[RMDB]
RNA sequence: GGGAACGACUCGAGUAGAGUCGAAAAAUGAUCUCAUCUUAACAAAGUACCUCUCCAAUGACUAUCUCCAAAUAAGCUCAAAUUCUGAGAUAUUGGAGGUUAGGGCUUCAACAUAGGAGUUUUGAGAUGUACACCGGAUAUUCGUAUCCGGUGUACAAAAAGAAACAACAACAACAAC
Reactivity to 2A3 in 0.01 (KOAc 150mM, MgCl2 10mM, bicine 150mM(pH8.5), 24C), signal-to-noise 1, nucleotides 027 to 126: a000u040g030a080u000c000u000c000a080u020c030u130u080a080a040c020a080a200a010g030u040a060c010c010u030c000u000c040c000a030a060u060g020a070c000u010a030u010c010u110c050c020a040a000a130u070a080a070g030c020u000c010a100a200a150u300u090c120u030g000a000g020a000u000a020u050u000g000g000a000g010g040u000u070a000g000g060g020c010u130u070c050a090a070c020a100u120a030g010g040a090g030u000u000u000u020g080a050g000a020
Reactivity to DMS in 0.01 (KOAc 150mM, MgCl2 10mM, bicine 150mM(pH8.5), 24C), signal-to-noise 1, nucleotides 027 to 126: a090u000g000a140u000c000u010c010a080u010c050u020u010a060a090c170a090a050a110g020u010a150c030c040u000c000u000c020c030a130a070u010g000a090c080u000a040u020c030u000c010c030a000a020a050u010a050a050g000c000u000c000a040a040a150u000u000c210u000g010a010g000a030u000a050u000u000g000g010a020g010g000u010u000a010g000g000g000c110u000u000c130a070a190c150a070u000a080g020g000a020g010u000u000u000u000g020a040g010a070

The data come from the RNA Mapping Database (RMDB), library OK2TST. This 177-nucleotide RNA was probed chemically with 2A3 and DMS. The reactions ran in a buffer of 150 mM KOAc, 10 mM MgCl2 and 150 mM bicine (pH 8.5), at 24 C. High 2A3 reactivity points to a flexible backbone, as in loops and unpaired stretches. Values are in units of 0.01, from 0 to 300, in steps of 10.